The record gives the reactivity of an RNA of 177 nucleotides to DMS and 2A3. DMS adducts were read by reverse transcription with MarathonRT. The reactions ran in a buffer of 150 mM KOAc, 10 mM MgCl2 and 150 mM bicine (pH 8.5), at 24 C. Source: RMDB library OK2TST, as collected in RNAgym.
RNA sequence: GGGAACGACUCGAGUAGAGUCGAAAAGUGGGGCGAUGCUCAGGGGCAGCUGAGCUCAGGGACGGCUCAUCUGGGGCAGGAGCCCAGUGCUGGGGAAACACCAGAGGCUUUUGAGGCUGGUGUGGCCGUCGGAGUAAGAUUUCGAUCUUACUCCGACAAAAGAAACAACAACAACAAC
Reactivity to DMS in 0.01 (KOAc 150mM, MgCl2 10mM, bicine 150mM(pH8.5), 24C), signal-to-noise 1, nucleotides 027 to 126: g030u010g010g000g030g000c100g010a160u000g030c030u010c010a050g020g020g000g000c040a060g000c040u000g000a050g030c020u000c120a090g030g000g020a060c090g010g010c020u000c050a080u000c070u000g020g020g000g010c050a110g020g000a230g000c020c000c050a060g000u000g000c030u010g000g000g000g010a140a140a070c010a040c010c000a040g010a100g000g040c060u000u000u020u000g020a090g000g000c010u010g010g010u000g020u000g000g000c090c100
Reactivity to 2A3 in 0.01 (KOAc 150mM, MgCl2 10mM, bicine 150mM(pH8.5), 24C), signal-to-noise 1, nucleotides 027 to 126: g060u090g040g000g020g030c060g080a060u100g000c060u030c060a040g010g030g050g000c010a020g030c020u040g010a000g010c010u010c020a060g020g040g020a060c050g000g000c000u010c040a120u040c040u040g010g000g000g010c020a090g100g220a020g020c000c000c050a010g010u050g000c000u040g000g000g000g030a020a160a000c010a000c000c010a000g030a050g160g000c090u210u160u230u300g050a050g000g000c030u020g030g000u030g010u030g010g000c000c030